[RMDB]
RNA sequence: GGGAACGACUCGAGUAGAGUCGAAAAAUAGUCGCGCUUUACAUUCUCAAAUCUACAGUUAAGAGAUUUAGAAAACAUUAUAUCCUCGGAUGAUGUUAUCACUGUUUCUGGAGUAGGAUAUAUUAAAGUCUUUACAGAUUUCGUCCGAUUCAAAUAAGUGUUUUCAUCAAUUCGUUGAUGAAAACACAAAAGAAACAACAACAACAAC
Reactivity to 2A3 in 0.01 (KOAc 150mM, MgCl2 10mM, bicine 150mM(pH8.5), 24C), signal-to-noise 2, nucleotides 027 to 156: a000u120a020g060u060c070g010c000g000c080u010u090u080a060c020a040u000u030c020u000c000a020a080a090u050c010u140a210c050a090g020u190u130a160a050g040a020g040a090u070u040u140a080g030a030a040a040a000c010a000u020u050a060u050a010u220c000c000u010c010g010g010a020u000g010a000u000g080u110u050a100u160c060a070c040u030g000u050u140u010c010u010g100g040a110g060u050a010g000g000a000u020a000u040a040u080u110a080a080a020g000u000c010u060u120u010a110c070a030g080a100u100u040u120c020g010u000c000c010g080a030u100u100c070a020a070a110u240a220a020
An RNA of 207 nucleotides, treated with 2A3 and read out base by base. For 2A3 the reverse transcriptase was SuperScript II with manganese. Values are in units of 0.01, from 0 to 300, in steps of 10. The data come from the RNA Mapping Database (RMDB), library OK3TST. Conditions: 150 mM KOAc, 10 mM MgCl2 and 150 mM bicine (pH 8.5), 24 C. As a SHAPE reagent, 2A3 marks flexible, mostly unpaired nucleotides at the ribose 2'-OH.